[RMDB]
RNA sequence: GGGAACGACUCGAGUAGAGUCGAAAAAGCACGCAUGAUCCAAUUCCAACUUCUAGUAGAAUGAGUGUUUGCUAUUAGGCAACUGACUCAAUAGUGGUCCAAUCUGCAUGGGGUGGGCAGUUGCAGGCAUGGGUAGAAAAUUCGUUUUCUACCCAUGAAAAGAAACAACAACAACAAC
Reactivity to 2A3 in 0.01 (KOAc 150mM, MgCl2 10mM, bicine 150mM(pH8.5), 24C), signal-to-noise 7, nucleotides 027 to 126: a000g030c030a010c020g040c020a040u080g030a070u080c030c030a030a090u080u030c030c020a060a040c050u120u050c030u110a080g020u030a030g090a120a070u090g020a030g050u040g040u050u050u060g000c020u050a140u260u160a140g090g000c010a020a020c030u070g160a080c010u020c020a030a100u070a060g100u090g070g000u010c030c000a020a070u040c030u080g020c030a050u070g030g000g040g030u050g010g020g000c020a020g030u030u040g000c010a010g030g030
Reactivity to DMS in 0.01 (KOAc 150mM, MgCl2 10mM, bicine 150mM(pH8.5), 24C), signal-to-noise 9, nucleotides 027 to 126: a070g010c040a020c060g010c040a050u000g010a100u010c080c070a080a130u000u000c030c040a070a100c100u000u010c080u000a090g020u000a080g010a070a070u000g010a070g010u000g010u000u000u000g010c010u000a110u010u000a080g000g010c020a020a010c080u000g000a090c010u000c020a040a080u010a090g020u000g010g010u000c050c090a050a080u010c050u000g010c060a090u000g010g000g000g020u000g000g000g010c040a030g010u000u000g010c030a090g000g010